Structure probing data (DMS and 2A3) for a 177-nucleotide construct. For 2A3 the reverse transcriptase was SuperScript II with manganese.
RNA sequence: GGGAACGACUCGAGUAGAGUCGAAAAAUCCUGGAAUGUACAGGACUGCACACCACAACAGAGUUACUCAGACCAAAAUGUCAUUACGUGGAGGCUGAGAAAGCUUAGCUCCCAGGUGGGAGUCAGAAUAUAUGUGAUCCUUCGGGAUCACAUAUAUAAAAGAAACAACAACAACAAC
Reactivity to DMS in 0.01 (KOAc 150mM, MgCl2 10mM, bicine 150mM(pH8.5), 24C), signal-to-noise 3, nucleotides 027 to 126: a110u000c000c000u000g030g000a110a080u020g030u010a090c030a020g010g010a100c080u000g010c120a080c110a170c040c010a060c090a060a120c140a090g030a060g010u000u000a240c010u000c000a010g010a130c000c000a000a200a130a020u000g020u000c220a140u010u010a090c040g010u000g000g010a300g000g010c000u000g030a040g020a030a110a240g000c040u000u010a070g010c050u000c000c010c000a190g010g030u020g000g000g000a050g020u000c120a040g010a090
Reactivity to 2A3 in 0.01 (KOAc 150mM, MgCl2 10mM, bicine 150mM(pH8.5), 24C), signal-to-noise 2, nucleotides 027 to 126: a000u050c040c000u060g040g090a270a190u230g030u200a080c010a030g000g030a020c010u050g040c040a020c030a040c060c010a040c020a110a020c020a060g060a010g070u080u060a020c010u000c030a050g200a300c040c000a000a010a000a030u050g050u070c060a140u220u300a010c010g010u010g000g010a020g000g000c000u030g020a000g040a010a010a000g000c000u030u010a020g010c000u060c030c010c020a090g010g300u210g060g050g000a020g030u010c000a020g120a160
Reactivities are rounded to 0.1 and cut off at 0 and 3.